Annotation: An RNA of 207 nucleotides, treated with DMS and 2A3 and read out base by base. It was measured as part of the RMDB library OK3TST. DMS adducts were read by reverse transcription with MarathonRT. 2A3 adducts were read by reverse transcription with SuperScript II with manganese. The 2A3 profile rests on 1,338 reads. For DMS, 3,639 sequencing reads were counted. The RNA was probed in 150 mM KOAc, 10 mM MgCl2 and 150 mM bicine (pH 8.5) at 24 C.
[RMDB]
RNA sequence: GGGAACGACUCGAGUAGAGUCGAAAAAGCCUCGCCGGGGUUGAUUGCGGCAAUUCCAGCGGCAGCGACGGCAUUAACUAUUGUCGAUCAAGACUACGUUGAAGGCACUGAUUACGAAAUCAAUUAUGCGAUAGGCUGGCUUAGUGCGAUUACAGGCUCAUACAUAUCCCUUCGGGGAUAUGUAUGAAAAAGAAACAACAACAACAAC
Reactivity to DMS in 0.01 (KOAc 150mM, MgCl2 10mM, bicine 150mM(pH8.5), 24C), signal-to-noise 2, nucleotides 027 to 156: a090g010c030c000u010c040g010c050c040g040g050g050g000u000u010g010a090u000u020g010c040g020g010c040a070a130u000u050c000c030a080g040c030g000g000c060a070g000c060g030a070c020g020g040c010a050u010u010a050a130c140u000a120u000u000g030u000c010g000a120u000c030a060a110g020a110c030u010a030c040g020u000u000g000a120a040g020g010c070a140c050u020g000a180u010u000a140c070g000a080a070a060u010c040a040a070u000u000a100u000g010c100g010a080u000a060g010g040c030u000g030g010c070u000u000a080g010u000g040c050g010a160u000u000a070c080a040g000g020c120
Reactivity to 2A3 in 0.01 (KOAc 150mM, MgCl2 10mM, bicine 150mM(pH8.5), 24C), signal-to-noise 2, nucleotides 027 to 156: a000g020c000c000u050c020g000c010c030g050g060g070g000u030u070g060a110u060u130g010c030g020g000c030a010a080u080u040c030c010a000g020c010g050g020c030a010g010c020g030a010c010g000g000c010a010u050u090a080a050c090u110a040u160u080g000u000c040g040a180u040c060a060a030g080a120c040u030a040c040g030u010u050g050a070a040g010g010c030a000c050u020g020a060u050u090a080c090g050a040a050a040u030c010a000a060u030u100a040u180g040c050g070a050u050a070g040g000c030u020g010g000c000u020u030a040g060u040g060c030g060a080u070u100a050c020a040g000g020c010